RNA sequence: GGGAACGACUCGAGUAGAGUCGAAAACAUUACGAAUUCAGUCGCAAAUUGUAGAAUUAGCUACUCUACGAUUUAGUGAGCGUUAGUAACGUUGUAAUAUAAUAUAUUCUUUGGAAGGAUUAUAUUGGAGCCGCGGACAAGUUCGCUUGUCCGCGAAGUUGAAUAUCAGCUUCGGCUGAUAUUCAACAAAAGAAACAACAACAACAAC
Reactivity to 2A3 in 0.01 (KOAc 150mM, MgCl2 10mM, bicine 150mM(pH8.5), 24C), signal-to-noise 2, nucleotides 027 to 156: c040a030u120u120a030c020g040a100a200u120u120c070a080g070u050c040g030c030a000a020a000u010u000g000u000a010g000a030a080u040u090a070g030c040u070a030c010u030c000u000a000c000g000a000u010u010u070a090g010u050g050a070g080c010g030u040u080a050g000u030a080a030c050g010u000u000g020u050a040a160u040a090u010a150a010u010a000u010a050u090u030c010u120u100u130g060g040a070a050g010g000a000u020u040a010u080a010u030u060g050g050a060g080c060c010g000c010g000g000a000c000a000a000g000u000u050c110g030c140u010u020g000u000c000c000g000c000g000a000a000
Conditions: 150 mM KOAc, 10 mM MgCl2 and 150 mM bicine (pH 8.5), 24 C. An RNA of 207 nucleotides, treated with 2A3 and read out base by base. 2A3 adducts were read by reverse transcription with SuperScript II with manganese.